[RMDB]
RNA sequence: GGGAACGACUCGAGUAGAGUCGAAAAGAGGAUACGAAGAGCUUCGUGCUUUCGAUAGCUUUGUAGCGGCGGCUACGUCCCCUAGGGGAGCCGCCUCCCCUGCUAUCGGCGCGAGGGGAGUAUCCGAAUAUUUAUAUACUUUCGAGUAUAUAAAUAUAAAAGAAACAACAACAACAAC
Reactivity to DMS in 0.01 (KOAc 150mM, MgCl2 10mM, bicine 150mM(pH8.5), 24C), signal-to-noise 4, nucleotides 027 to 126: g010a210g010g010a020u000a000c000g000a070a170g000a170g000c000u000u000c010g020u000g010c030u000u000u010c040g020a020u000a010g000c010u000u000u010g000u010a070g020c160g010g010c030g000g010c030u000a090c150g010u000c010c000c010c060u010a170g020g020g000g010a090g000c010c010g010c020c000u000c010c010c040c030u000g000c000u000a010u000c010g010g010c020g010c010g000a010g000g000g000g000a030g010u000a010u000c000c000g000a080